[RMDB]
RNA sequence: GGGAACGACUCGAGUAGAGUCGAAAAGCGUGUGUGGUUGUGUGUGGAUUGAUGUGGGUUUUAACUUGUUGCCGUUCGGGACGUUGACGAAAUGGAGCGAUUUGACCCGUCUUGAAACACGGACCAACAGUCUAGUAAUGUUCGCAUUACUAGACUGAAAAGAAACAACAACAACAAC
Reactivity to 2A3 in 0.01 (KOAc 150mM, MgCl2 10mM, bicine 150mM(pH8.5), 24C), signal-to-noise 6, nucleotides 027 to 126: g090c080g020u100g010u030g020u040g110g000u050u050g150u040g000u000g010u010g130g020a040u000u050g020a030u050g060u220g080g020g030u030u020u000u080a030a020c020u040u050g040u080u130g160c010c000g010u020u010c010g020g020g120a130c150g140u170u240g050a060c010g030a020a040a080u110g010g000a010g010c010g020a030u000u010u050g020a010c010c000c000g010u010c000u000u010g000a010a000a000c010a010c010g020g000a000c000c000a000a040
Reactivity to DMS in 0.01 (KOAc 150mM, MgCl2 10mM, bicine 150mM(pH8.5), 24C), signal-to-noise 6, nucleotides 027 to 126: g000c140g010u000g020u020g030u010g010g010u010u000g010u010g040u000g000u000g000g000a230u010u000g000a030u000g020u010g040g000g000u000u000u010u010a030a040c160u000u010g010u010u010g020c020c020g010u000u000c020g010g000g020a120c210g010u010u000g010a130c030g000a020a030a060u010g000g010a070g010c030g000a050u000u000u000g000a040c020c010c000g010u000c020u000u000g000a300a100a040c070a030c010g010g000a040c030c020a050a170